[RMDB]
RNA sequence: GGGAACGACUCGAGUAGAGUCGAAAAGGCAGGAUUCGUCCUGCCAUCGAGCGUACUACGGAGGCGUUCUGAUGACCCAUCGUAACAUCGGUCCCAAAUAGGACCGUGGAUGGCAAGGAACCCUCCGUAUCGCAAAGUGGACCUGUUCGCAGGUCAAACAUAUCCUAACAUUCGUGUUAGGAUAUGUAAAAGAAACAACAACAACAAC
Reactivity to DMS in 0.01 (KOAc 150mM, MgCl2 10mM, bicine 150mM(pH8.5), 24C), signal-to-noise 3, nucleotides 027 to 156: g030g010c010a010g020g000a070u010u010c300g060u000c000c010u000g070c000c000a020u000c040g010a260g010c020g030u000a050c090u010a030c010g010g010a040g020g000c150g050u000u000c010u010g000a100u000g000a070c300c000c000a010u000c010g040u000a110a160c070a090u000c010g030g000u000c000c010c010a080a180a250u010a020g000g010a020c010c000g030u000g010g000a030u010g000g000c020a080a180g010g000a020a030c020c000c000u000c000c000g040u000a000u000c030g000c000a030a110a110g020u010g000g000a030c010c000u010g020u000u000c280g010c030a010g000g000u000c000a030a090
Reactivity to 2A3 in 0.01 (KOAc 150mM, MgCl2 10mM, bicine 150mM(pH8.5), 24C), signal-to-noise 3, nucleotides 027 to 156: g020g000c000a000g010g060a010u050u080c150g160u050c140c000u000g020c010c000a020u060c020g100a010g000c000g010u130a140c030u000a000c070g010g000a000g000g030c160g040u000u000c010u020g060a160u160g070a060c000c000c000a020u010c020g140u170a210a070c030a250u180c040g000g040u020c010c000c000a140a300a090u240a140g000g000a000c000c000g010u000g030g000a000u000g000g020c030a070a160g000g000a000a000c000c000c000u000c000c020g000u000a010u010c000g010c000a050a000a000g200u200g110g030a020c000c000u000g030u090u110c270g000c060a000g000g000u000c000a010a040